RNA sequence: GGGAACGACUCGAGUAGAGUCGAAAAUUACUCUUUCCUAUAAAGAGGAGACUGCUGGACUCGCCGCCCAAGCCCGAGCAUGGGCCCCAGUUCCGAACGAAGAGACCGCCGGGGAAGGGGGGCGAACGCAUAAAAGUAUGUUCGCAUACUUUUAUGCAAAAGAAACAACAACAACAAC
Reactivity to DMS in 0.01 (KOAc 150mM, MgCl2 10mM, bicine 150mM(pH8.5), 24C), signal-to-noise 2, nucleotides 027 to 126: u020u000a160c050u020c030u010u010u010c070c040u010a150u020a080a010a080g000a020g000g010a120g010a080c100u000g000c140u000g010g020a130c130u000c020g020c030c000g000c010c000c010a070a300g030c020c010c010g000a120g010c010a060u000g000g010g010c010c000c010c010a130g000u000u000c160c180g000a080a050c040g010a060a030g000a160g010a210c040c020g000c050c000g000g000g000g040a070a300g000g030g050g000g000g040c030g010a030a040c120
Reactivity to 2A3 in 0.01 (KOAc 150mM, MgCl2 10mM, bicine 150mM(pH8.5), 24C), signal-to-noise 1, nucleotides 027 to 126: u090u060a100c000u000c000u060u090u040c020c010u160a160u200a300a100a010g020a020g030g000a020g010a050c070u080g000c040u040g040g060a080c020u020c020g010c010c000g200c000c010c000a050a140g040c000c020c000g080a080g010c020a190u270g000g010g060c000c010c010c010a010g020u090u040c040c110g060a040a040c020g010a010a060g060a000g030a050c000c000g010c070c000g000g020g000g010a020a050g000g010g000g020g000g000c000g000a000a000c000
Source information: Chemical mapping of a 177-nucleotide RNA with DMS and 2A3. It was measured as part of the RMDB library 15KREP. 2A3 adducts were read by reverse transcription with SuperScript II with manganese. The reactions ran in a buffer of 150 mM KOAc, 10 mM MgCl2 and 150 mM bicine (pH 8.5), at 24 C.